[RMDB]
RNA sequence: GGGAACGACUCGAGUAGAGUCGAAAAGAUAUGGAUCGCACGACAUGAUCUUUAUCGGAAACGAUAACUGAUCAACAGCGUGGCGAUCCUAAGUCAAAAGCAAGUUAUAGUUCGCUAUAACUUGCAAGAAAACUAUUACCUUCGGGUAAUAGUUUUCAAAAGAAACAACAACAACAAC
Reactivity to 2A3 in 0.01 (KOAc 150mM, MgCl2 10mM, bicine 150mM(pH8.5), 24C), signal-to-noise 5, nucleotides 027 to 126: g000a000u010a010u060g000g000a010u000c010g000c010a000c020g260a170c150a300u300g000a000u010c000u020u010u010a000u010c000g000g000a000a010a000c000g000a000u000a020a070c180u080g020a010u010c040a200a300c130a190g000c000g010u040g100g030c000g000a010u000c000c010u000a000a000g000u000c020a110a060a080a050g030c010a010a000g000u000u000a000u000a020g050u050u080c300g000c150u000a000u000a010a010c010u000u010g000c000a000a010
Reactivity to DMS in 0.01 (KOAc 150mM, MgCl2 10mM, bicine 150mM(pH8.5), 24C), signal-to-noise 4, nucleotides 027 to 126: g010a020u000a110u010g010g000a010u000c000g020c000a020c030g010a070c080a190u000g000a000u000c000u000u000u000a010u000c000g000g010a030a010a060c000g000a020u000a010a020c300u010g010a010u000c000a140a160c210a180g000c000g000u000g020g020c000g010a010u000c000c000u000a000a070g000u010c010a090a100a110a180g010c000a010a000g000u000u010a010u000a010g010u000u010c290g010c010u000a000u000a000a000c000u000u000g000c000a020a050